The record gives the reactivity of an RNA of 177 nucleotides to DMS and 2A3. 2A3 adducts were read by reverse transcription with SuperScript II with manganese. Conditions: 150 mM KOAc, 10 mM MgCl2 and 150 mM bicine (pH 8.5), 24 C. Source: RMDB library OK1LIB, as collected in RNAgym. The 2A3 profile rests on 1,266 reads. For DMS, 1,248 sequencing reads were counted.

RNA sequence: GGGAACGACUCGAGUAGAGUCGAAAAGACACACUUCGCAGAUGACCUCCUCGUUGGUGCGUGUCGGUAAUGUUGUCAGUCACAGGCAACAGUUAACGAUCUGCUUAAAUAAAAAGAGAAGAACAAACCAUGAUGCAGUCUUCGGACUGCAUCAUGGAAAAGAAACAACAACAACAAC
Reactivity to DMS in 0.01 (KOAc 150mM, MgCl2 10mM, bicine 150mM(pH8.5), 24C), signal-to-noise 1, nucleotides 027 to 126: g030a000c000a020c000a090c080u000u000c110g000c050a000g020a000u000g000a050c090c000u000c150c000u000c030g000u110u000g000g000u000g000c070g020u000g000u000c050g000g020u000a150a050u000g010u000u050g000u000c050a070g000u020c170a060c280a180g000g000c000a030a020c000a000g000u000u000a000a160c000g000a000u000c000u000g000c000u050u000a040a110a150u130a030a000a060a050a020g000a170g000a090a130g030a090a000c110a000a020a080
Reactivity to 2A3 in 0.01 (KOAc 150mM, MgCl2 10mM, bicine 150mM(pH8.5), 24C), signal-to-noise 2, nucleotides 027 to 126: g000a000c050a000c000a000c050u090u230c040g010c020a000g030a030u000g000a000c000c000u060c010c010u160c040g110u100u200g030g000u010g000c020g000u060g010u010c000g000g080u090a070a060u000g000u010u010g020u030c020a040g230u160c040a050c010a030g000g000c000a010a010c000a000g010u000u040a010a000c020g000a000u000c000u010g020c010u000u100a040a050a060u250a000a190a010a050a030g130a000g010a030a070g040a060a030c040a110a150a030